This 177-nucleotide RNA was probed chemically with 2A3 and DMS. It was measured as part of the RMDB libraries RFM100 and RFMREP. In probing experiments dimethyl sulfate is read out at A N1 and C N3, which are open when not base-paired. 2A3 is a SHAPE reagent: it acylates the 2'-hydroxyl of flexible nucleotides of all four kinds. 2A3 adducts were read by reverse transcription with SuperScript II with manganese. Conditions: 150 mM KOAc, 10 mM MgCl2 and 150 mM bicine (pH 8.5), 24 C.
RNA sequence: GGGAACGACUCGAGUAGAGUCGAAAAACAUUACUUAAAUGUAAGGCCGAAGAAGCAAAAAAAAGAAUUUAUCUUAAUCUUUUUUGAAACUGACAGGCAAAAGGAAGAUUAUUUGACGAAGCUUUGGAACUAUAAGAGGAUUCGUCCUCUUAUAGUUAAAAGAAACAACAACAACAAC
Reactivity to 2A3 in 0.01 (KOAc 150mM, MgCl2 10mM, bicine 150mM(pH8.5), 24C), signal-to-noise 4, nucleotides 027 to 126: a000c010a040u010u070a030c030u100u110a120a100a110u110g000u020a050a020g070g020c000c010g060a150a030g030a060a010g030c070a010a060a060a000a000a000a040a020g050a080a080u080u110u150a090u170c020u030u060a050a020u020c000u000u030u010u000u010u040g060a110a040a090c030u030g070a040c010a050g020g020c010a010a050a000a050g110g010a040a060g020a010u050u070a040u090u170u220g040a040c080g040a020a020g010c020u040u060u030g060g060
Reactivity to DMS in 0.01 (KOAc 150mM, MgCl2 10mM, bicine 150mM(pH8.5), 24C), signal-to-noise 4, nucleotides 027 to 126: a060c030a100u000u000a020c020u000u010a080a100a080u000g000u000a030a030g000g010c000c010g010a080a070g000a170a050g000c030a000a010a000a040a050a030a020a020g000a060a060u030u000u030a100u050c080u030u010a070a040u010c000u010u000u010u000u010u010g000a060a130a100c020u000g000a120c240a120g000g010c020a070a060a060a040g000g010a070a060g000a090u010u010a050u020u010u000g010a060c150g000a070a120g000c010u010u010u010g000g010